[RMDB]
RNA sequence: GGGAACGACUCGAGUAGAGUCGAAAAUGUGGCAGCAGCUUUAGGGGUAACAACAGGUUUAGAUAAUACCUUACUGGCGGAUAUCUUGCAGCAGGUGCGCCCGCUGAUUGGUCAAGGGAAAGUGGCGUAAAGCUUUAUAUUUCGAUAUAAAGCUUUAAAAAGAAACAACAACAACAAC
Reactivity to DMS in 0.01 (KOAc 150mM, MgCl2 10mM, bicine 150mM(pH8.5), 24C), signal-to-noise 9, nucleotides 027 to 126: u010g020u000g010g010c030a070g010c050a050g000c070u000u000u000a090g010g010g010g010u010a060a070c110a060a100c120a050g000g010u000u000u000a080g010a110u010a090a110u010a090c030c010u000u000a090c110u000g010g010c100g010g000a090u000a050u000c040u000u000g010c050a050g000c040a060g010g010u010g010c130g010c030c020c030g020c060u010g000a120u000u000g010g000u000c040a040a040g000g000g000a050a060a100g010u000g010g010c050g010
Reactivity to 2A3 in 0.01 (KOAc 150mM, MgCl2 10mM, bicine 150mM(pH8.5), 24C), signal-to-noise 3, nucleotides 027 to 126: u110g000u040g010g000c010a020g010c010a000g020c040u060u040u090a050g010g020g000g010u050a060a030c020a030a020c010a050g050g030u060u120u040a020g040a020u100a120a060u090a130c000c000u030u080a060c030u030g040g000c020g020g020a010u040a030u090c040u040u080g020c020a030g000c010a010g060g000u050g010c040g020c000c010c000g020c050u070g030a140u080u090g030g010u030c040a030a030g040g000g010a030a040a070g060u040g040g000c010g010